Chemical mapping of a 177-nucleotide RNA with DMS and 2A3. It was measured as part of the RMDB libraries RFM100 and RFMREP. 2A3 adducts were read by reverse transcription with SuperScript II with manganese. The RNA was probed in 150 mM KOAc, 10 mM MgCl2 and 150 mM bicine (pH 8.5) at 24 C.

RNA sequence: GGGAACGACUCGAGUAGAGUCGAAAACGUGAAGUUAAUGGCUAGAGUGACUAGACCCGUAACAUUGCUAUGAAAUCAUUUGAACUGAAAUUUGUUGAUCUGCGGUUUAUUUUCAAGAGAUCAAAACGAGUAUCAGAUCCUUCGGGAUCUGAUACUCAAAAGAAACAACAACAACAAC
Reactivity to DMS in 0.01 (KOAc 150mM, MgCl2 10mM, bicine 150mM(pH8.5), 24C), signal-to-noise 1, nucleotides 027 to 126: c120g020u010g000a020a060g000u010u000a300a040u000g000g000c030u010a000g000a160g050u040g000a100c020u010a050g000a120c000c000c120g000u000a100a100c040a090u020u020g030c030u000a090u000g000a080a080a040u010c090a010u010u010u000g010a140a110c120u000g020a100a050a080u000u000u000g000u000u000g020a000u000c010u000g000c210g090g000u010u030u040a060u020u000u000u010c110a030a260g000a010g000a030u000c070a040a030a090a090c190
Reactivity to 2A3 in 0.01 (KOAc 150mM, MgCl2 10mM, bicine 150mM(pH8.5), 24C), signal-to-noise 1, nucleotides 027 to 126: c120g000u010g030a170a030g000u000u010a000a000u010g000g010c000u000a000g000a130g000u040g020a030c000u040a000g080a110c000c000c020g000u100a030a000c000a040u030u080g000c000u000a010u060g080a050a050a200u160c200a210u100u190u070g040a060a010c030u000g050a020a080a130u110u150u050g040u000u000g000a000u000c000u010g220c120g000g060u110u100u270a250u030u260u060u060c000a000a070g000a030g000a070u000c000a000a000a000a000c020